This 177-nucleotide RNA was probed chemically with 2A3 and DMS.
The 2A3 profile rests on 906 reads.
2A3 adducts were read by reverse transcription with SuperScript II with manganese.
Reactivities are given for positions 27 through 126.
[RMDB]
RNA sequence: GGGAACGACUCGAGUAGAGUCGAAAAUUGGAGGUGAUACGCGUUAAAACGGGUGUGAUACCCUUGGGCAAAUGCCUGGACAGCGGCGUCGUAAGUGGGUAGCUCGGGGUUAUACGUUCCGCCUGGAUACUCUGCCUUACUUCGGUAAGGCAGAGUAAAAAGAAACAACAACAACAAC
Reactivity to 2A3 in 0.01 (KOAc 150mM, MgCl2 10mM, bicine 150mM(pH8.5), 24C), signal-to-noise 2, nucleotides 027 to 126: u180u060g060g010a020g030g020u070g050a070u100a120c050g070c040g010u060u080a000a080a080a000c070g000g000g020u020g060u120g110a030u160a140c000c020c000u000u150g000g000g000c020a110a110a060u300g010c000c020u000g030g040a070c010a030g020c040g010g040c050g000u120c000g040u060a020a180g040u120g030g070g010u050a040g020c070u050c000g010g010g020g000u100u150a190u060a100c030g010u040u030c080c020g050c050c020u000g000g000a000
Reactivity to DMS in 0.01 (KOAc 150mM, MgCl2 10mM, bicine 150mM(pH8.5), 24C), signal-to-noise 1, nucleotides 027 to 126: u030u050g010g090a030g020g000u010g000a050u000a050c080g000c030g000u010u000a020a020a140a170c140g000g010g000u000g000u000g000a170u000a060c020c010c010u020u050g000g000g000c000a150a080a130u020g000c010c000u020g000g070a070c120a050g020c100g000g000c080g000u010c040g000u050a060a110g030u010g020g030g000u000a050g000c050u000c000g000g000g000g000u000u000a130u050a080c090g000u000u000c040c000g000c050c020u010g000g000a300